[RMDB]
Annotation: This 177-nucleotide RNA was probed chemically with 2A3. Conditions: 150 mM KOAc, 10 mM MgCl2 and 150 mM bicine (pH 8.5), 24 C. Reactivities are given for positions 27 through 126. Values are in units of 0.01, from 0 to 300, in steps of 10.
RNA sequence: GGGAACGACUCGAGUAGAGUCGAAAACUCUUGAGCCAGAUGUCGCCAGAUGUAGGCCUGAUAAGCGUAGCGCCAUCAGGCAUAAACCUAUCAGGCGUUGACCGCUUCGCCUUCGCCCAUAUCCAUCGUGGACCGAGCUGUUCGCAGCUCGGUCCACAAAAGAAACAACAACAACAAC
Reactivity to 2A3 in 0.01 (KOAc 150mM, MgCl2 10mM, bicine 150mM(pH8.5), 24C), signal-to-noise 1, nucleotides 027 to 126: c000u000c030u080u180g040a060g000c000c000a080g020a050u040g000u180c000g000c000c000a100g010a170u250g030u050a130g000g070c000c010u000g000a000u130a050a010g000c110g120u160a050g000c140g000c090c000a080u070c000a140g070g000c000a070u220a090a000a000c020c000u000a010u020c010a000g000g000c000g070u170u130g010a000c000c000g090c000u060u010c130g000c020c050u000u000c020g010c000c000c010a010u010a020u240c140c130a020u000c160